RNA sequence: GGGAACGACUCGAGUAGAGUCGAAAACAGACCUGCACGCACAUCGUGCAGUCGAUGCAGUCGCCCAGGCCCUGGGCCUUGUAGUCGAGGGACUUCUUGCGCGGGCCGCGCUUCUCGCCACGACGCACAAAAUAGUGGGAUUCGUCCCACUAUUUUGAAAAGAAACAACAACAACAAC
Reactivity to DMS in 0.01 (KOAc 150mM, MgCl2 10mM, bicine 150mM(pH8.5), 24C), signal-to-noise 9, nucleotides 027 to 126: c130a130g000a100c160c050u000g010c010a010c010g020c250a150c300a090u010c020g010u000g000c010a020g000u000c030g010a140u000g010c060a070g020u000c120g010c010c030c030a100g010g000c030c030c020u010g010g000g010c010c040u000u010g010u010a050g020u010c020g000a110g000g000g010a070c050u000u000c050u010u000g010c060g020c030g000g000g010c050c040g010c130g000c060u000u010c040u000c060g000c040c040a170c060g010a050c070g010c120a210
Reactivity to 2A3 in 0.01 (KOAc 150mM, MgCl2 10mM, bicine 150mM(pH8.5), 24C), signal-to-noise 6, nucleotides 027 to 126: c030a000g070a050c010c060u020g020c000a010c020g130c010a090c020a300u270c070g000u000g000c010a000g000u000c010g010a010u090g020c070a020g050u060c040g020c000c010c020a050g070g030c030c000c020u110g050g070g020c030c000u130u150g080u160a070g030u010c040g080a090g050g050g030a080c020u060u040c030u090u140g020c100g010c020g030g050g000c030c020g020c020g000c020u110u040c040u010c040g040c020c020a040c050g070a040c020g040c020a020